[RMDB]
RNA sequence: GGGAACGACUCGAGUAGAGUCGAAAACUUGAGCCCAAGAGUUCAAGACCAGCCUAGGUAACACAGUAAGACCCCAUCUCUACAAAAAGUAGAAAAAUUAGCCUGGCAUGGUGGUGAGUGCUUUUAAUCCCAACUACUUAGGGGGCUGAGAUGGGAACAUAUGAGGCUGGUUCGCCAGCCUCAUAUGAAAAGAAACAACAACAACAAC
Reactivity to 2A3 in 0.01 (KOAc 150mM, MgCl2 10mM, bicine 150mM(pH8.5), 24C), signal-to-noise 1, nucleotides 027 to 156: c010u000u020g000a000g010c010c020c040a080a000g030a030g000u020u030c010a020a010g010a050c020c010a030g000c000c010u130a110g150g000u080a140a040c070a030c030a110g100u180a160a060g100a110c030c000c000c000a010u010c000u010c000u010a000c070a050a120a040a020a000g000u000a000g080a120a060a010a000a000u170u120a050g030c020c000u050g030g110c110a110u030g050g040u040g060g000u040g100a140g050u110g050c000u070u080u010u090a060a020u030c010c020c000a030a030c010u080a010c000u030u040a040g110g000g000g100g020c060u070g000a000g000a000u000g060g020g000a000a000
Reactivity to DMS in 0.01 (KOAc 150mM, MgCl2 10mM, bicine 150mM(pH8.5), 24C), signal-to-noise 1, nucleotides 027 to 156: c020u020u000g000a080g000c020c000c040a170a260g030a020g030u010u010c000a020a050g030a150c050c050a170g020c040c020u010a040g040g060u000a080a090c050a110c070a060g030u000a050a070g010a230c030c010c010c030a080u000c000u030c000u000a170c040a090a020a210a030a110g020u010a110g000a030a010a070a020a090u000u010a080g000c060c030u000g000g030c040a090u000g080g050u010g030g050u000g010a190g000u010g000c050u000u000u000u040a030a120u000c010c000c020a030a300c030u000a060c010u010u000a170g020g030g080g010g020c130u000g000a080g000a020u000g000g040g010a040a090

Structure probing data (2A3 and DMS) for a 207-nucleotide construct. Values cover nucleotides 27 to 156. For 2A3, 525 sequencing reads were counted. 2A3 adducts were read by reverse transcription with SuperScript II with manganese. Reactivities are rounded to 0.1 and cut off at 0 and 3.